[RMDB]
RNA sequence: GGGAACGACUCGAGUAGAGUCGAAAAGGGAGCUGCUUCGGCAGCUCCCAAACCCGAUGAAGGCACCGAUACCGAGCUUCAUACAUCUAAGAGUGGAAAUAAAAACCGCUGCCUUCGGGCAGCGGAACGCAUAAAGUAAGUUCGCUUACUUUAUGCGAAAAGAAACAACAACAACAAC
Reactivity to DMS in 0.01 (KOAc 150mM, MgCl2 10mM, bicine 150mM(pH8.5), 24C), signal-to-noise 2, nucleotides 027 to 126: g010g010g010a010g050c020u010g050c010u000u030c110g010g020c000a030g010c010u000c010c000c000a000a030a040c000c000c000g020a050u020g000a060a050g020g010c050a040c110c060g010a160u010a110c180c010g010a100g000c010u020u000c040a060u010a100c080a050u000c090u010a080a070g010a060g050u000g000g000a130a090a100u010a070a040a100a140a060c010c010g010c000u000g010c010c010u010u010c130g080g020g020c000a000g020c000g020g010a000a020
Reactivity to 2A3 in 0.01 (KOAc 150mM, MgCl2 10mM, bicine 150mM(pH8.5), 24C), signal-to-noise 1, nucleotides 027 to 126: g030g030g000a030g000c010u060g000c060u100u110c240g070g000c080a000g070c040u030c000c010c000a020a020a020c010c000c010g020a010u060g020a000a070g130g000c020a020c080c070g020a020u150a220c070c100g000a040g030c010u040u010c000a020u090a110c010a080u080c050u170a140a060g080a070g220u090g050g070a090a240a020u130a050a170a030a070a020c000c030g040c000u000g010c000c030u010u040c090g050g020g000c050a000g000c020g000g000a000a010